[RMDB]
RNA sequence: GGGAACGACUCGAGUAGAGUCGAAAAAAUGGGAGAGAAUCCACUUCGUUGUCUCCAGGGUUUAGCACAGUGCAGACACUGAGUAGGUCUUUGAAGGCCCUGAGGCUUCUGGGUGUAGACAGAGUGUCGGGAGCAGAGGGAGGCUGCACUCCUUGGGGGAGAAGACGAAUUUCGAUUCGUCUUCUCCAAAAGAAACAACAACAACAAC
Reactivity to 2A3 in 0.01 (KOAc 150mM, MgCl2 10mM, bicine 150mM(pH8.5), 24C), signal-to-noise 1, nucleotides 027 to 156: a050a000u070g010g010g000a020g000a010g040a060a030u030c030c040a030c010u190u120c030g050u010u020g020u000c000u020c060c010a000g070g010g010u030u190u100a050g000c060a070c020a100g020u030g040c030a040g050a040c010a050c040u050g020a080g100u110a060g050g000u000c000u180u150u230g090a130a060g010g000c000c000c090u070g030a060g100g000c090u050u030c030u050g080g000g000u090g020u030a080g020a020c050a040g080a030g040u050g060u070c070g000g000g010a070g000c050a010g030a130g080g040g000a020g040g100c030u050g010c030a040c000u020c000c040u030u150g030g000g020
The data come from the RNA Mapping Database (RMDB), library OK3TST. Structure probing data (2A3) for a 207-nucleotide construct. The reactions ran in a buffer of 150 mM KOAc, 10 mM MgCl2 and 150 mM bicine (pH 8.5), at 24 C. 2A3 adducts were read by reverse transcription with SuperScript II with manganese. The 2A3 profile rests on 624 reads.